[RMDB]
RNA sequence: GGGAACGACUCGAGUAGAGUCGAAAAGUUUUUCGUUCGCGAAAAACAAAGCGUACUACGAAAGAGGACCAUGGAGCUGAGACUCCCAAAUAGGAGUCACAGCGAUGAAAUGGUCUACCCACCUUUCGUAUCGCAAAGUGUUCUGUUCGCAGAACACGUGAACUUAUGACUUCGGUCAUAAGUUCACAAAAGAAACAACAACAACAAC
Reactivity to 2A3 in 0.01 (KOAc 150mM, MgCl2 10mM, bicine 150mM(pH8.5), 24C), signal-to-noise 4, nucleotides 027 to 156: g010u020u000u000u000u010c050g010u060u120c300g000c020g080a000a010a000a000a010c080a070a060a030g010c020g020u060a100c020u010a010c000g010a000a000a000g020a010g020g000a000c000c000a010u010g000g030a020g000c000u010g010a010g000a140c000u030c000c040c000a110a170a150u220a170g000g000a000g000u010c020a010c000a060g000c000g030a050u040g010a000a030a010u000g000g000u000c000u060a080c030c020c020a050c000c010u000u010u000c010g000u010a070u300c020g000c050a090a100a020g010u010g000u000u000c010u010g070u020u090c290g010c070a010g000a010a000c010a010c020
Reactivity to DMS in 0.01 (KOAc 150mM, MgCl2 10mM, bicine 150mM(pH8.5), 24C), signal-to-noise 2, nucleotides 027 to 156: g000u000u030u010u000u000c010g010u020u000c300g060c040g010a010a030a040a000a050c010a040a060a190g000c000g000u000a060c090u010a050c000g040a020a040a040g030a200g060g000a030c000c010a030u000g000g000a150g000c020u000g010a110g000a000c010u000c010c010c010a010a180a160u010a040g030g010a060g040u000c000a110c010a010g050c000g040a030u000g030a070a040a010u000g030g000u010c000u000a000c010c010c070a300c130c030u000u000u000c000g010u000a060u000c030g000c030a080a150a140g000u000g040u000u000c000u000g000u010u010c180g020c030a010g020a000a000c010a010c010